[RMDB]
RNA sequence: GGGAACGACUCGAGUAGAGUCGAAAACGAGGCUGAGGGUAUUCCGGCGCUGGACGCGGUCCGUGAAACCAAAGCUGCCACCUGGGAAUUAGACAACGUCGAUGCGUCUGACGACGGGCUGGUGGACGGCAUGGAUGGAAUUCGUUCCAUCCAUGCCAAAAGAAACAACAACAACAAC
Reactivity to 2A3 in 0.01 (KOAc 150mM, MgCl2 10mM, bicine 150mM(pH8.5), 24C), signal-to-noise 4, nucleotides 027 to 126: c060g060a060g030g000c010u010g010a080g090g090g040u110a280u030u000c000c000g010g000c020g000c000u060g180g070a090c120g000c000g010g040u130c000c000g050u140g130a030a000a000c030c000a010a060a000g000c000u010g000c000c000a020c000c020u050g060g020g070a090a110u120u060a100g010a070c100a130a050c120g040u040c010g040a070u180g070c040g090u090c100u080g040a030c030g010a020c020g000g010g000c020u000g000g000u020g010g030a050c030
Reactivity to DMS in 0.01 (KOAc 150mM, MgCl2 10mM, bicine 150mM(pH8.5), 24C), signal-to-noise 2, nucleotides 027 to 126: c090g000a080g020g020c010u010g000a140g000g000g000u000a110u010u020c000c000g000g000c020g000c000u030g000g000a200c110g000c000g000g000u040c000c020g000u080g000a020a060a060c020c000a050a150a100g000c000u000g010c040c000a030c000c000u000g000g000g000a300a110u040u000a050g000a060c050a120a090c110g020u030c090g000a120u070g040c100g030u010c030u000g000a030c020g000a290c000g000g000g000c130u020g020g050u000g020g030a170c060

This 177-nucleotide RNA was probed chemically with 2A3 and DMS. For 2A3, 2,560 sequencing reads were counted. The RNA was probed in 150 mM KOAc, 10 mM MgCl2 and 150 mM bicine (pH 8.5) at 24 C. It was measured as part of the RMDB library OK1LIB. 2A3 adducts were read by reverse transcription with SuperScript II with manganese. DMS (dimethyl sulfate) methylates the pairing face of unpaired adenines and cytosines.